[RMDB]
RNA sequence: GGGAACGACUCGAGUAGAGUCGAAAAAGCGUCGACGAACCUUCCAACCUUCCAAAGCAGCAAAAGCUGAACCUUCCAACCUUCCAAUCUACUCGAGACGAGGAGGAGGAGGAGGAGGAGGAAUUAAUCCCAUAAACAUCUUCGGAUGUUUAUGGGAAAAAGAAACAACAACAACAAC
Reactivity to DMS in 0.01 (KOAc 150mM, MgCl2 10mM, bicine 150mM(pH8.5), 24C), signal-to-noise 2, nucleotides 027 to 126: a020g000c110g040u000c020g020a100c080g010a200a090c080c020u000u010c060c010a050a150c050c000u000u000c030c030a070a120a130g010c010a020g030c050a140a040a090a100g000c000u000g010a090a140c050c000u000u000c010c050a080a070c060c000u000u010c020c010a110a130u010c010u000a040c030u000c000g010a050g010a140c070g000a060g010g020a090g000g000a170g000g010a100g000g000a100g000g000a150g000g000a120g010g000a180a090u020u000a050a070
Conditions: 150 mM KOAc, 10 mM MgCl2 and 150 mM bicine (pH 8.5), 24 C. This 177-nucleotide RNA was probed chemically with DMS. It was measured as part of the RMDB library M2PK90.